[RMDB]
RNA sequence: GGGAACGACUCGAGUAGAGUCGAAAAGCAGAUUGUGGACCAAAAAGGAGAACUACGAGAGCUUGAGGGUUUGCGGAUGUGAUGAUUUGUACAGCUUCGUCCAUCAUCGGACCAGAAAUUACUGUAUAAUCUGGGAUGACGUGCCCAGCGACCACACAAAUUCUGUCUUUUUCGAAAGACAGAAUUUAAAAGAAACAACAACAACAAC
Reactivity to DMS in 0.01 (KOAc 150mM, MgCl2 10mM, bicine 150mM(pH8.5), 24C), signal-to-noise 5, nucleotides 027 to 156: g010c040a080g010a150u010u010g030u010g020g010a120c050c050a040a070a060a090a090g000g010a120g000a070a090c030u000a060c040g000a150g000a060g020c020u000u010g010a110g030g020g020u000u000u000g020c030g020g010a110u010g020u010g030a090u010g010a090u000u000u010g040u000a030c030a070g010c040u000u000c050g000u000c010c020a100u000c150a110u010c140g020g000a130c020c030a140g010a050a080a100u000u000a080c030u010g010u000a260u010a050a040u000c020u010g000g020g000a170u000g010a100c090g020u000g020c030c010c020a080g000c070g000a100c040c000a040c050a070c140
Reactivity to 2A3 in 0.01 (KOAc 150mM, MgCl2 10mM, bicine 150mM(pH8.5), 24C), signal-to-noise 8, nucleotides 027 to 156: g040c030a010g020a090u100u090g050u080g050g030a080c030c050a050a050a030a050a060g080g040a070g010a100a020c050u100a040c150g020a020g010a020g100c020u060u070g020a080g030g020g020u030u110u150g030c030g030g020a050u040g050u060g040a090u020g010a020u040u060u170g030u060a030c010a030g020c030u030u040c030g010u000c020c010a060u100c020a060u160c140g000g010a010c020c000a030g080a020a070a020u180u120a050c030u030g020u060a040u020a070a050u010c020u020g000g010g030a050u090g050a040c040g040u080g020c000c000c000a010g000c020g040a040c020c040a030c010a010c020
This 207-nucleotide RNA was probed chemically with DMS and 2A3. The 2A3 profile rests on 8,253 reads. 2A3 adducts were read by reverse transcription with SuperScript II with manganese. The DMS profile rests on 13,732 reads. It was measured as part of the RMDB library OK3TST.